Background: This 177-nucleotide RNA was probed chemically with DMS and 2A3. For DMS the reverse transcriptase was MarathonRT. For DMS, 816 sequencing reads were counted. For 2A3 the reverse transcriptase was SuperScript II with manganese. It was measured as part of the RMDB library RFMREP. For 2A3, 1,106 sequencing reads were counted. Conditions: 150 mM KOAc, 10 mM MgCl2 and 150 mM bicine (pH 8.5), 24 C.

RNA sequence: GGGAACGACUCGAGUAGAGUCGAAAACGUCUUGAAACACGGACCAAGGAGUCUAACAUGCUUGCGAGUAUUAGGGUGUUGAAACCCGAAUGCGUAAUGAAAGUGAAUUUCAGAUGUGAUCCGCAAGGUACUAUCCGACGUUCGCGUCGGAUAGUACAAAAGAAACAACAACAACAAC
Reactivity to DMS in 0.01 (KOAc 150mM, MgCl2 10mM, bicine 150mM(pH8.5), 24C), signal-to-noise 1, nucleotides 027 to 126: c010g040u040c030u000u050g000a010a030a050c130a040c000g010g050a110c090c060a200a150g000g040a080g000u040c040u000a040a040c190a070u020g010c070u010u020g000c030g020a100g010u010a020u000u010a110g000g010g040u000g010u000u020g010a130a160a040c020c000c000g000a020a010u000g050c010g010u000a060a130u020g010a060a030a050g020u000g000a070a130u000u000u000c040a020g020a040u000g030u000g000a100u000c010c030g010c170a170a040g010
Reactivity to 2A3 in 0.01 (KOAc 150mM, MgCl2 10mM, bicine 150mM(pH8.5), 24C), signal-to-noise 2, nucleotides 027 to 126: c010g010u000c000u030u110g000a050a010a020c030a020c050g010g020a000c000c010a120a300g160g000a170g040u090c020u080a010a010c020a100u110g060c000u040u020g020c020g010a060g060u040a050u050u050a020g000g000g020u020g050u070u170g080a100a040a000c000c000c000g000a000a030u010g000c000g010u040a050a080u110g070a110a030a010g010u030g080a150a180u000u000u000c000a000g000a000u010g030u020g000a020u020c020c020g060c120a030a030g110